About this RNA: Structure probing data (2A3) for a 177-nucleotide construct. High 2A3 reactivity points to a flexible backbone, as in loops and unpaired stretches. The RNA was probed in 150 mM KOAc, 10 mM MgCl2 and 150 mM bicine (pH 8.5) at 24 C. The 2A3 profile rests on 422 reads.
RNA sequence: GGGAACGACUCGAGUAGAGUCGAAAAUAACUCUUUUUAAACGUUUUUACGUUCAAACUACCCAGUCAAAAUGAAUCCCUGCUCCUGCAACUGCUGCUCCGGCAACUGCAACAACUGCUCUUGCGGCAGCGGGCUAUCAGUUCGCUGAUAGCCCGCUAAAAGAAACAACAACAACAAC
Reactivity to 2A3 in 0.01 (KOAc 150mM, MgCl2 10mM, bicine 150mM(pH8.5), 24C), signal-to-noise 1, nucleotides 027 to 126: u070a030a010c010u070c020u050u020u000u100u200a120a000a000c050g000u060u000u080u180u240a000c030g000u090u070c000a000a060a110c000u090a020c040c030c000a010g070u040c000a000a020a080a120u170g050a020a020u110c000c000c000u000g000c000u000c020c020u040g080c000a090a010c030u090g020c000u040g000c000u060c070c010g100g010c040a070a070c010u070g000c010a020a020c010a020a020c020u000g000c000u030c020u060u050g040c000g050g000c010